[RMDB]
Description: Chemical mapping of a 207-nucleotide RNA with 2A3. Source: RMDB library ARCHII, as collected in RNAgym. As a SHAPE reagent, 2A3 marks flexible, mostly unpaired nucleotides at the ribose 2'-OH.
RNA sequence: GGGAACGACUCGAGUAGAGUCGAAAAGACGAAGCCAAUGGAAGAUGCGUCAAAGGGAUUCCAGCCUGUGAUCUCAACUGAGAAACCCCGUCCUGCUUGGAUGAUGCAGGUAUGUGGACUUGCUGGAAAACAGGUCCUCAUACCCUAACUGCGGAAAGUAUAGAGCGCACUUCGGUGCGCUCUAUACAAAAGAAACAACAACAACAAC
Reactivity to 2A3 in 0.01 (KOAc 150mM, MgCl2 10mM, bicine 150mM(pH8.5), 24C), signal-to-noise 2, nucleotides 027 to 156: g030a010c060g110a030a010g090c020c020a050a080u100g030g020a100a020g050a100u100g050c000g090u070c080a080a050a030g000g030g020a050u050u020c010c000a050g040c010c050u120g010u100g140a160u020c040u010c070a060a100c110u110g050a040g070a170a060a080c000c020c000c000g030u020c030c000u110g070c040u090u110g030g000a020u080g010a000u100g070c070a050g030g010u000a000u000g010u010g000g000a000c000u010u010g070c030u120g080g060a000a020a030a050c000a000g000g020u000c000c010u000c000a000u000a000c000c010c030u040a080a050c010u040g010c040g020g050a120a020a000